An RNA of 177 nucleotides, treated with 2A3 and DMS and read out base by base. For DMS the reverse transcriptase was MarathonRT. Source: RMDB library OK1LIB, as collected in RNAgym. The reactions ran in a buffer of 150 mM KOAc, 10 mM MgCl2 and 150 mM bicine (pH 8.5), at 24 C.
RNA sequence: GGGAACGACUCGAGUAGAGUCGAAAAGCCAAUGGCGUUCUCGUUUUCGUACCACGAUAUGGAUUGAAGGGUCCAGUUUAUCUUAAGGACAGAACAGGCCAAGUUGUUACCCCUCAUGUCGAAGAAGGUAAUACAUGAGCUUCGGCUCAUGUAUUACAAAAGAAACAACAACAACAAC
Reactivity to 2A3 in 0.01 (KOAc 150mM, MgCl2 10mM, bicine 150mM(pH8.5), 24C), signal-to-noise 4, nucleotides 027 to 126: g030c020c010a040a120u220g030g000c050g020u080u020c030u020c040g040u070u070u040u070c060g030u080a170c020c040a050c060g010a050u010a030u170g030g000a030u010u190g140a120a100g170g000g010u000c000c000a020g000u060u130u100a110u030c030u050u100a120a080g010g000a010c000a020g060a040a020c030a010g040g000c000c010a030a060g030u040u000g080u050u140a110c010c020c000c000u020c070a060u100g060u050c070g020a040a010g030a050a000g220
Reactivity to DMS in 0.01 (KOAc 150mM, MgCl2 10mM, bicine 150mM(pH8.5), 24C), signal-to-noise 4, nucleotides 027 to 126: g000c010c030a120a070u050g010g020c020g000u000u020c010u000c060g010u000u000u020u000c160g010u020a080c080c060a140c190g010a030u010a100u000g000g020a030u020u010g000a090a090g000g010g000u000c010c010a070g010u040u020u010a010u000c060u010u000a070a110g010g000a050c040a090g000a040a030c030a060g050g010c000c030a050a140g000u010u000g010u000u010a090c000c000c000c000u020c080a090u030g010u010c070g010a050a100g020a110a130g000